[RMDB]
RNA sequence: GGGAACGACUCGAGUAGAGUCGAAAAGGCGCACAGUGAGUGCACUACUCUUCGGUCAUCCAGCACUCUUAGGAGGACGUGUUUCAUCCCAUGGAAUCCUCACCAGCCAUGUGUGAGGAGUGCUCACUUUACAGAUGAGGAAACAGGCUUGGCAAUAGUGUCUAAGUAACUUCGGUUACUUAGACACAAAAGAAACAACAACAACAAC
Reactivity to DMS in 0.01 (KOAc 150mM, MgCl2 10mM, bicine 150mM(pH8.5), 24C), signal-to-noise 2, nucleotides 027 to 156: g050g000c040g030c000a070c020a210g040u000g000a110g100u010g050c020a060c010u000a080c090u000c040u010u000c070g010g040u000c070a080u000c050c010a150g050c030a050c040u010c010u010u010a080g050g060a040g020g060a080c070g020u000g020u000u000u010c060a110u010c000c030c010a160u020g000g020a120a130u000c010c010u000c010a040c000c020a170g010c100c120a130u020g030u000g000u010g020a050g020g010a030g050u000g030c030u000c050a050c050u000u000u000a140c100a100g020a060u010g000a050g020g000a070a040a130c040a120g000g030c070u010u020g020g010c010a050a100u000a150
Reactivity to 2A3 in 0.01 (KOAc 150mM, MgCl2 10mM, bicine 150mM(pH8.5), 24C), signal-to-noise 4, nucleotides 027 to 156: g070g010c040g060c040a030c040a070g070u000g160a020g010u030g110c030a000c040u070a050c000u030c010u070u110c080g050g010u030c040a070u030c040c030a020g000c030a020c020u050c010u110u100a060g090g000a010g000g000a040c040g050u030g020u030u060u130c070a090u060c040c020c010a020u050g030g050a040a060u000c010c000u000c010a020c010c010a010g110c020c040a150u070g100u030g000u020g020a000g000g020a010g010u010g020c000u000c020a030c000u080u080u140a080c110a080g070a150u040g020a060g050g050a020a060a040c030a010g060g040c020u070u090g020g000c010a020a050u140a130